[RMDB]
RNA sequence: GGGAACGACUCGAGUAGAGUCGAAAAUGAACCAUCGCGAGCUGGGAGAGGAGAGGCGAAGAUAGCAGCGGAGACCCCGGUCCGAAUGCCCGUCGGCAGCAAACUCCUCUGGAGUCCUUCGGAUCCAAAAUCAGUAGCUUCGGCUACUGAAAAAGAAACAACAACAACAAC
Reactivity to DMS in 0.01 (KOAc 150mM, MgCl2 10mM, bicine 150mM(pH8.5), 24C), signal-to-noise 9, nucleotides 027 to 129: u050g020a110a110c040c040a000u050c050g030c140g020a070g040c010u040g000g030g040a090g030a060g000g010a100g000a060g020g010c100g000a030a000g000a080u020a070g040c120a090g010c120g000g000a030g000a120c040c030c020c060g010g010u000c020c010g010a070a060u030g020c000c020c210g050u040c110g050g000c030a030g000c100a070a080a030c000u020c020c000u040c060u080g010g000a000g000u000c060c090u040u010c010g020g020a050u010c000c100a040a050a070a070
Reactivity to 2A3 in 0.01 (KOAc 150mM, MgCl2 10mM, bicine 150mM(pH8.5), 24C), signal-to-noise 8, nucleotides 027 to 129: u160g010a030a030c010c000a080u070c060g040c040g040a010g020c000u050g020g020g010a050g020a010g030g000a030g000a040g020g010c040g010a030a010g040a050u140a030g020c060a020g040c020g020g010a040g030a070c010c000c000c010g010g000u000c010c000g010a090a050u070g020c030c020c010g120u120c080g030g000c020a010g000c030a030a060a090c020u020c010c010u090c070u120g010g000a010g030u050c010c000u030u040c020g000g000a030u020c020c040a030a040a000a140
Structure probing data (DMS and 2A3) for a 170-nucleotide construct. 2A3 adducts were read by reverse transcription with SuperScript II with manganese. Reactivities are given for positions 27 through 129. It was measured as part of the RMDB library 15KLIB. The RNA was probed in 150 mM KOAc, 10 mM MgCl2 and 150 mM bicine (pH 8.5) at 24 C. For DMS, 43,810 sequencing reads were counted.